[RMDB]
RNA sequence: GGGAACGACUCGAGUAGAGUCGAAAAGGGGUCAUUCGAGGAACAGUGGAGCCACUGGCUGAAGCCUCCACGGCCACUGGCGUUGAAACUGUUCUCCCCACCGAAUGACGGAGGCACCCAAAACAUAACCGCUCAACUUCGGUUGAGCGGUUAUGAAUGAUAGUACAGUAUUCGUACUGUACUAUCAAAAAGAAACAACAACAACAAC
Reactivity to 2A3 in 0.01 (KOAc 150mM, MgCl2 10mM, bicine 150mM(pH8.5), 24C), signal-to-noise 2, nucleotides 027 to 156: g060g010g030g010u020c000a010u010u000c010g000a020g010g010a000a000c000a000g010u010g010g020a000g000c010c000a000c010u000g000g010c000u020g040a140a020g010c000c000u000c000c000a020c010g010g010c010c000a000c030u010g000g000c010g120u190u030g000a000a000a000c000u010g010u000u000c010u010c000c000c010c010a020c010c000g000a000a010u010g000a010c020g010g030a010g000g010c000a020c010c020c000a040a090a030a040c020a000u030a000a000c000c000g000c000u000c010a010a010c000u050u060c210g090g000u000u000g000a000g000c000g010g000u000u000a000u000g000a000a000
Reactivity to DMS in 0.01 (KOAc 150mM, MgCl2 10mM, bicine 150mM(pH8.5), 24C), signal-to-noise 2, nucleotides 027 to 156: g020g010g000g040u000c010a030u000u010c020g000a280g010g010a010a030c030a060g010u020g000g000a050g060c010c000a060c030u000g030g000c020u000g010a040a090g000c040c020u000c050c040a300c020g000g020c010c010a030c030u000g020g070c040g030u000u000g010a230a090a010c050u000g020u000u000c030u000c300c020c030c060a300c070c030g000a050a060u000g000a060c030g010g000a040g050g030c010a110c040c010c020a060a060a090a170c010a020u000a020a000c000c010g040c020u010c010a010a010c010u000u000c290g020g040u000u000g000a030g000c020g000g000u000u000a000u000g020a070a080